[RMDB]
RNA sequence: GGGAACGACUCGAGUAGAGUCGAAAAUAUGGAAUGACCGAUUGCUUGUGCUCGCCGUGGAUAAUGCUCAUAUCCAACGAGGAGUUCUCCUCGACUGGUGUCAAGAACUGAACUACGGACUUGAUUGCCGCGCUCAGCACGCCCAUACUCCAGACGCAAUAUUUCCUAGUUUCGACUAGGAAAUAUUAAAAGAAACAACAACAACAAC
Reactivity to 2A3 in 0.01 (KOAc 150mM, MgCl2 10mM, bicine 150mM(pH8.5), 24C), signal-to-noise 7, nucleotides 027 to 156: u180a040u040g020g040a080a090u080g030a090c020c040g070a120u060u110g010c050u100u140g030u040g030c010u030c060g050c030c020g030u050g000g030a030u020a150a060u170g040c030u010c070a040u050a030u080c010c010a030a060c020g000a020g000g010a020g020u140u090c090u030c070c000u030c000g080a110c110u060g020g000u040g020u030c040a030a020g000a100a070c020u050g050a070a030c050u120a060c120g030g040a050c020u020u070g050a050u070u230g030c020c010g010c000g010c030u030c060a010g010c010a010c020g000c000c000c010a020u040a050c020u010c030c010a040g040a120c060g010c130
Reactivity to DMS in 0.01 (KOAc 150mM, MgCl2 10mM, bicine 150mM(pH8.5), 24C), signal-to-noise 4, nucleotides 027 to 156: u000a100u010g020g000a130a120u010g000a130c030c020g020a140u000u000g010c030u000u000g030u000g020c010u000c030g030c020c020g050u000g020g010a070u000a070a140u000g000c030u010c060a260u000a080u010c030c000a070a110c010g010a040g030g000a080g010u000u010c100u020c020c020u000c020g020a110c080u010g020g010u000g010u020c110a080a130g010a070a070c030u000g010a080a150c040u000a060c010g000g000a080c060u000u010g010a180u010u010g020c020c030g020c090g030c050u000c030a080g020c050a060c020g000c030c010c010a070u000a050c050u010c030c020a120g000a090c050g030c090
Description: Structure probing data (2A3 and DMS) for a 207-nucleotide construct. For 2A3 the reverse transcriptase was SuperScript II with manganese. It was measured as part of the RMDB library OK3TST. Conditions: 150 mM KOAc, 10 mM MgCl2 and 150 mM bicine (pH 8.5), 24 C. The DMS profile rests on 10,350 reads.